[RMDB]
RNA sequence: GGGAACGACUCGAGUAGAGUCGAAAAAGGAAGUCACAUGUAACCCAGUAGACUAUAGGAAACCAUCCAGCAGGCCAGGAUGAGAACAGAGACCUGGAAUGUCACAAAAGUGAAAAACCUUAGCAAGCAGAAAGUUCAAGGGGAAAUAGCAUUGAUAGGUAAAAUUACGAUUCGUCGUAAUUUUACCAAAAGAAACAACAACAACAAC
Reactivity to DMS in 0.01 (KOAc 150mM, MgCl2 10mM, bicine 150mM(pH8.5), 24C), signal-to-noise 2, nucleotides 027 to 156: a140g000g020a070a060g030u000c010a100c170a120u010g000u010a120a180c020c030c020a200g040u000a160g010a140c040u020a090u000a090g030g020a090a140a130c080c000a080u020c020c020a080g040c030a110g000g000c000c000a190g020g010a020u000g000a120g020a070a100c050a130g000a040g010a120c010c000u010g000g030a040a120u010g030u000c070a120c090a040a140a030a060g050u000g000a020a050a050a030a060c010c010u000u020a040g030c110a040a020g040c010a050g020a060a080a110g000u000u000c050a040a050g010g020g010g020a090a020a060u000a030g020c000a040u020u030g000a090u000a030
Reactivity to 2A3 in 0.01 (KOAc 150mM, MgCl2 10mM, bicine 150mM(pH8.5), 24C), signal-to-noise 3, nucleotides 027 to 156: a000g060g030a030a010g020u020c010a050c030a090u160g040u140a060a050c000c020c010a000g030u030a020g020a040c050u050a070u130a260g070g030a080a070a020c030c020a020u040c000c010a030g070c010a020g070g040c070c010a000g000g000a020u070g010a020g020a070a010c030a030g070a010g010a070c020c010u010g000g000a050a060u140g050u150c010a000c000a120a090a040a030g000u000g030a060a040a010a000a000c020c000u030u040a030g030c020a030a000g010c000a000g080a050a060a000g010u040u030c000a000a000g000g000g000g010a030a030a020u030a010g000c020a020u170u300g040a070u270a050

Source: RMDB library OK3TST, as collected in RNAgym.
The record gives the reactivity of an RNA of 207 nucleotides to DMS and 2A3.
Conditions: 150 mM KOAc, 10 mM MgCl2 and 150 mM bicine (pH 8.5), 24 C.
The 2A3 profile rests on 1,801 reads.
2A3 adducts were read by reverse transcription with SuperScript II with manganese.
DMS adducts were read by reverse transcription with MarathonRT.